[RMDB]
RNA sequence: GGGAACGACUCGAGUAGAGUCGAAAACUUUCAUGUUCGCAUGAAAGAAAAAGAUAUGGAAAUAUCCCUUGCAAGUACGCGGGUCGGAAACGACCCUGAAUGUAUGAUGACCAAGGGAGUAUUUCCUAAGUCAAAAAUCGGGACUUCGGUCCCGAAAGACAACUGAUUUGUUCGCAAAUCAGUUGUCAAAAGAAACAACAACAACAAC
Reactivity to 2A3 in 0.01 (KOAc 150mM, MgCl2 10mM, bicine 150mM(pH8.5), 24C), signal-to-noise 2, nucleotides 027 to 156: c000u000u000u000c000a010u000g020u060u100c300g020c090a000u020g000a000a010a000g050a090a100a020a010a000g010a000u090a040u100g010g010a000a000a000u010a010u010c000c000c000u000u000g040c100a210a120g020u020a000c030g000c020g070g000g010u000c000g000g030a020a040a070c020g000a030c020c020c020u010g020a070a020u130g000u010a000u020g150a190u090g050a040c080c030a000a000g000g000g000a010g000u010a000u000u000u000c000c010u000a030a000g040u000c040a010a000a000a300a070u220c020g020g010g000a000c020u030u050c230g050g000u000c000c030c000g010a000a000a010
The data come from the RNA Mapping Database (RMDB), library RNAMAK. Structure probing data (2A3) for a 207-nucleotide construct. The reactions ran in a buffer of 150 mM KOAc, 10 mM MgCl2 and 150 mM bicine (pH 8.5), at 24 C. For 2A3 the reverse transcriptase was SuperScript II with manganese.